[RMDB]
RNA sequence: GGGAACGACUCGAGUAGAGUCGAAAAUGCUGCGGUUGUGGCGAAGCGGCCUGGGGCGUGGCAGUCACAGCAGCAUGCAGAUUUACAUGACUCUCACUGUUAUUCUCAAAAGCCGUGCGGUCCCGGUUGAGCGGAGACACACCCGAGGCAGGCCGAGGAGGUGGGAUGAGUUCGCUCAUCCCACCUCAAAAGAAACAACAACAACAAC
Reactivity to 2A3 in 0.01 (KOAc 150mM, MgCl2 10mM, bicine 150mM(pH8.5), 24C), signal-to-noise 2, nucleotides 027 to 156: u000g000c000u010g000c000g000g040u020u020g000u010g020g000c030g020a070a030g040c040g000g090c000c060u110g010g000g020g030c060g000u050g040g030c040a000g010u020c010a010c000a000g060c030a000g000c000a000u100g010c000a030g030a090u060u190u140a090c110a060u170g030a050c030u040c000u030c140a040c010u020g040u060u020a030u110u070c080u000c000a040a090a010a000g060c030c000g010u070g110c030g130g020u150c030c000c000g030g000u050u190g100a040g030c010g000g090a060g020a070c020a000c010a010c020c010c000g000a010g010g000c010a000g000g030c040c050g010a050g110